[RMDB]
RNA sequence: GGGAACGACUCGAGUAGAGUCGAAAAGACUUUUGGGUUUGGAGUGUGGCUCUGCCACCAUGUGAUCCACACCAAGCUGUGUGGCAGCUCCCAUGUCCUGCUGGGGUGACAGUGCUGCUGUGUGGGGACCUCUAUUUGGUUUCGACCAAAUAGAGGUAAAAGAAACAACAACAACAAC
Reactivity to 2A3 in 0.01 (KOAc 150mM, MgCl2 10mM, bicine 150mM(pH8.5), 24C), signal-to-noise 3, nucleotides 027 to 126: g040a030c040u110u080u110u130g040g020g020u060u070u090g040g040a110g010u140g010u040g030g000c020u020c120u300g000c000c000a030c020c050a050u150g070u080g070a100u010c030c000a000c000a020c020c010a110a040g050c180u050g020u000g000u010g100g010c000a020g010c000u040c000c000c030a050u100g070u050c010c020u050g020c040u060g000g020g020g010u000g020a020c020a070g040u050g110c020u020g000c000u020g020u040g020u090g070g000g010g020
Reactivity to DMS in 0.01 (KOAc 150mM, MgCl2 10mM, bicine 150mM(pH8.5), 24C), signal-to-noise 6, nucleotides 027 to 126: g020a100c050u000u000u000u000g010g000g010u000u000u000g010g000a090g020u010g020u000g000g010c030u020c140u010g010c020c020a030c030c060a060u010g020u010g000a140u010c020c010a020c040a030c020c050a100a150g010c140u010g000u000g020u000g010g010c060a040g000c040u000c020c010c080a100u010g000u000c010c020u000g010c130u000g010g000g000g000u000g010a070c090a050g010u010g020c040u000g000c030u000g010u000g020u000g010g000g000g000